The data come from the RNA Mapping Database (RMDB), library M2PK90. The record gives the reactivity of an RNA of 177 nucleotides to DMS and 2A3. For 2A3 the reverse transcriptase was SuperScript II with manganese. The reactions ran in a buffer of 150 mM KOAc, 10 mM MgCl2 and 150 mM bicine (pH 8.5), at 24 C. For DMS the reverse transcriptase was MarathonRT.
RNA sequence: GGGAACGACUCGAGUAGAGUCGAAAAGCUCGGAGCGUAAUCCCGUCUUGACGUGAGUAGGGAUAGACUAGACUGUAGGCUAUCCCAGUGUGCAUAGCGCACAAUACGCUGAUCUACAGUCAACAAACCCCUAUCUAAAAUUCGUUUUAGAUAGGGGAAAAGAAACAACAACAACAAC
Reactivity to DMS in 0.01 (KOAc 150mM, MgCl2 10mM, bicine 150mM(pH8.5), 24C), signal-to-noise 6, nucleotides 027 to 126: g010c020u000c020g030g010a040g020c010g020u010a070a200u000c010c030c000g000u000c070u000u010g000a030c020g010u000g000a040g000u010a140g010g000g010a020u000a010g010a040c030u000a100g010a010c000u000g010u000a010g000g000c010u000a010u000c000c000c000a040g010u000g000u000g000c000a190u010a150g010c210g010c010a010c000a020a040u000a010c010g000c010u000g000a120u010c070u000a010c000a010g000u000c010a170a140c190a080a090a130
Reactivity to 2A3 in 0.01 (KOAc 150mM, MgCl2 10mM, bicine 150mM(pH8.5), 24C), signal-to-noise 6, nucleotides 027 to 126: g060c020u020c060g070g060a030g000c010g010u020a030a030u020c040c050c010g010u030c060u100u200g100a030c010g020u040g030a040g020u080a130g020g000g010a000u000a000g010a020c010u010a060g010a000c010u010g000u010a000g010g000c000u000a010u010c000c010c000a000g000u010g000u010g000c050a120u170a280g090c040g000c060a000c000a010a020u040a030c020g000c020u020g020a050u010c000u010a000c000a000g000u010c020a020a020c020a020a100a030